[RMDB]
Structure probing data (2A3 and DMS) for a 177-nucleotide construct. For 2A3, 2,021 sequencing reads were counted. 2A3 is a SHAPE reagent: it acylates the 2'-hydroxyl of flexible nucleotides of all four kinds. Conditions: 150 mM KOAc, 10 mM MgCl2 and 150 mM bicine (pH 8.5), 24 C.
RNA sequence: GGGAACGACUCGAGUAGAGUCGAAAACGGAACCGCUUUCGACAGGGACGGAAAGCAAGAGACAUUACCUGGAGAAGAAGCGCCGUCCAACUGCGGGUCAGUAACAGCGGAAAGCCGCAGGGCGCGAAAUUAAAUAUUUAUUCGUAAAUAUUUAAUUAAAAGAAACAACAACAACAAC
Reactivity to 2A3 in 0.01 (KOAc 150mM, MgCl2 10mM, bicine 150mM(pH8.5), 24C), signal-to-noise 3, nucleotides 027 to 126: c020g030g040a030a030c060c030g010c040u020u050u040c030g040a040c000a020g040g000g070a050c020g060g080a130a040a040g090c060a130a040g040a030g020a080c000a080u080u180a110c020c030u050g020g010a080g020a080a010g020a090a020g000c000g000c010c000g030u040c010c010a050a050c020u020g000c000g000g080g040u080c030a040g030u060a100a080c000a030g040c010g100g030a210a030a000g100c000c000g000c010a000g000g030g000c060g000c010g020a020
Reactivity to DMS in 0.01 (KOAc 150mM, MgCl2 10mM, bicine 150mM(pH8.5), 24C), signal-to-noise 3, nucleotides 027 to 126: c090g010g010a100a100c060c060g010c050u010u000u010c030g000a240c010a050g010g000g010a090c170g000g000a060a060a090g010c170a060a110g010a150g000a140c050a080u030u030a130c030c030u010g000g010a180g000a070a050g010a100a130g000c030g020c020c020g020u010c090c070a110a260c010u000g000c000g000g000g020u020c010a080g000u030a110a090c130a090g000c050g000g000a100a080a130g010c000c000g000c030a020g000g010g000c020g020c030g010a020

2A3 adducts were read by reverse transcription with SuperScript II with manganese.